Description
Chemical mapping of a 177-nucleotide RNA with DMS. For DMS the reverse transcriptase was MarathonRT.
RNA sequence: GGGAACGACUCGAGUAGAGUCGAAAAGAUAUGGAGGGAUGUGGUGGAGUAUAGCUUUUGACGCUCUAAGGGUCGGAAACGACCCGAAAGAGCGAUAAGCUAUACUCCACCACCUCCCUCCUAAGUCCACAUAGCAAAUGUUCGCAUUUGCUAUGUGAAAAGAAACAACAACAACAAC
Reactivity to DMS in 0.01 (KOAc 150mM, MgCl2 10mM, bicine 150mM(pH8.5), 24C), signal-to-noise 2, nucleotides 027 to 126: g010a090u000a300u000g000g020a030g000g010g020a000u000g030u000g000g050u000g010g000a010g000u010a000u000a010g010c000u000u000u000u000g020a230c090g010c020u010c010u000a030a300g010g020g010u000c000g010g010a090a090a270c000g010a000c020c010c000g000a040a060a040g000a010g020c000g020a030u000a000a000g000c000u000a010u000a010c000u000c000c000a010c000c000a000c000c010u000c010c000c000u000c000c000u000a010a060g000u010c050

Conditions: 150 mM KOAc, 10 mM MgCl2 and 150 mM bicine (pH 8.5), 24 C.
For DMS, 3,255 sequencing reads were counted.